Conditions: 150 mM KOAc, 10 mM MgCl2 and 150 mM bicine (pH 8.5), 24 C. The record gives the reactivity of an RNA of 177 nucleotides to 2A3 and DMS. Reactivities are given for positions 27 through 126. For DMS the reverse transcriptase was MarathonRT.

[RMDB]
RNA sequence: GGGAACGACUCGAGUAGAGUCGAAAAGAUAUGGAUACGCGAGGACGUUGAAAUGACUGUGUCGGAAACGACAUUCAUGGAGUCCUCAUCCUAAGUCAAAACGAUUACACGUUCGCGUGUAAUCGAAGAUGUCAAACUUGUUCGCAAGUUUGACAUCAAAAGAAACAACAACAACAAC
Reactivity to 2A3 in 0.01 (KOAc 150mM, MgCl2 10mM, bicine 150mM(pH8.5), 24C), signal-to-noise 5, nucleotides 027 to 126: g000a010u060a030u120g030g010a030u070a180c230g090c170g300a010g000g000a000c050g120u300u080g050a110a150a000u030g030a020c180u160g000u010g010u110c020g030g010a060a040a040c010g010a000c010a000u020u020c000a020u030g050g040a010g010u000c010c000u000c000a000u000c000c000u030a150a030g050u010c060a050a030a030a120c020g000a010u000u010a010c000a000c000g050u070u090c290g010c000g150u020g000u000a000a000u000c000g000a010a010
Reactivity to DMS in 0.01 (KOAc 150mM, MgCl2 10mM, bicine 150mM(pH8.5), 24C), signal-to-noise 5, nucleotides 027 to 126: g010a040u000a300u000g010g010a030u000a100c300g050c210g010a010g020g000a030c000g010u010u000g010a180a130a010u000g000a020c300u010g020u000g000u000c010g000g010a090a050a180c000g030a000c000a000u000u000c020a000u000g000g000a070g010u000c000c010u010c000a020u000c000c010u010a030a180g000u000c040a040a050a130a160c020g000a000u010u000a020c010a000c000g020u000u010c210g010c000g020u010g010u000a000a000u010c010g000a040a040